[RMDB]
RNA sequence: GGGAACGACUCGAGUAGAGUCGAAAAGGGAUAAGAGAGUACUCUUAUCCCCACGUCGUUGGUGACAACGACGAUUAUCCGGUGGCCACCCGCAGGGGCCACCGUUACUCCACUCCACUCCUUCGGGACUGGUUUGGAGGAACAUAACACUGCUAAACCAUUUAUGACGAUUCGUCGUCAUAAAUGGAAAAGAAACAACAACAACAAC
Reactivity to 2A3 in 0.01 (KOAc 150mM, MgCl2 10mM, bicine 150mM(pH8.5), 24C), signal-to-noise 1, nucleotides 027 to 156: g000g000g000a000u010a000a000g010a000g000a050g190u200a220c000u000c000u010u000a000u000c000c000c000c000a040c000g000u000c000g000u000u000g010g030u070g020a040c000a010a000c000g000a000c000g000a010u070u060a060u080c030c030g000g000u000g000g000c030c040a050c030c060c080g000c010a010g030g010g000g000c000c000a000c000c000g000u000u050a010c000u000c000c020a000c000u020c000c000a000c000u010c000c010u020u100c190g050g000g010a010c010u000g000g000u000u000u010g000g000a010g000g000a020a000c020a000u210a060a020c090a010c040u010g010c020u080a140a040a020

This 207-nucleotide RNA was probed chemically with 2A3. It was measured as part of the RMDB library OK3TST. The 2A3 profile rests on 1,553 reads. The RNA was probed in 150 mM KOAc, 10 mM MgCl2 and 150 mM bicine (pH 8.5) at 24 C.